[RMDB]
RNA sequence: GGGAACGACUCGAGUAGAGUCGAAAAUGCAGGCGACAACUGCUAAUGUCAGUGCACUUAUGGGUGCUAAUGGCAACAAGAUUGUUGACAAAGAAGUUAAAGACAUGCAGUUUGAUUUGUAUGUCAACAUUAAGAUCGUCUUCGGACGAUCUUAAUGAAAAGAAACAACAACAACAAC
Reactivity to DMS in 0.01 (KOAc 150mM, MgCl2 10mM, bicine 150mM(pH8.5), 24C), signal-to-noise 3, nucleotides 027 to 126: u000g000c000a040g030g010c060g010a070c100a060a080c010u000g000c010u020a090a110u000g010u000c010a040g000u000g030c010a000c000u010u000a160u000g030g000g010u000g040c010u010a060a070u000g020g000c010a020a090c170a060a130g020a150u010u010g010u000u010g000a100c090a060a100a100g010a090a100g000u000u000a060a050a110g000a040c020a030u000g030c020a040g000u000u000u010g010a120u020u010u000g010u000a040u000g000u000c000a060a100